Background
This 177-nucleotide RNA was probed chemically with 2A3 and DMS. High 2A3 reactivity points to a flexible backbone, as in loops and unpaired stretches. For 2A3 the reverse transcriptase was SuperScript II with manganese. The RNA was probed in 150 mM KOAc, 10 mM MgCl2 and 150 mM bicine (pH 8.5) at 24 C. Reactivities are given for positions 27 through 126.
RNA sequence: GGGAACGACUCGAGUAGAGUCGAAAAAGCCGUGCCGUACGCGGCACGGCAAGGCUGAGAUUGGGAGCACUCCCUUUAAGGGUGUGCUCCUGGUCUCGGCUCGACGUGCCUCGUACGCGAGGCACGAUACUUCAUUAAUCUUCGGAUUAAUGAAGUAAAAAGAAACAACAACAACAAC
Reactivity to 2A3 in 0.01 (KOAc 150mM, MgCl2 10mM, bicine 150mM(pH8.5), 24C), signal-to-noise 2, nucleotides 027 to 126: a010g000c000c010g000u020g000c000c000g030u080a050c300g040c040g090g000c000a000c000g000g000c010a000a010g010g000c000u030g010a010g000a070u040u010g010g030g000a010g000c000a000c020u060c020c040c090u010u120u190a080a190g000g000g000u000g000u000g000c000u000c000c000u000g000g000u010c000u000c000g010g000c000u000c020g050a030c010g000u000g000c000c000u010c000g000u030a020c210g010c000g070a000g010g000c010a000c000g010a000
Reactivity to DMS in 0.01 (KOAc 150mM, MgCl2 10mM, bicine 150mM(pH8.5), 24C), signal-to-noise 2, nucleotides 027 to 126: a060g020c030c010g120u010g070c100c000g090u020a050c250g010c050g010g000c040a000c060g000g000c040a010a010g010g000c000u020g000a000g000a010u000u000g000g010g000a000g020c010a010c020u000c010c010c000u000u010u020a100a140g000g000g020u020g020u000g000c010u000c000c000u000g000g000u000c000u000c000g000g010c000u000c080g000a150c000g040u000g000c000c000u000c000g000u000a120c190g010c000g000a020g000g050c000a000c020g010a080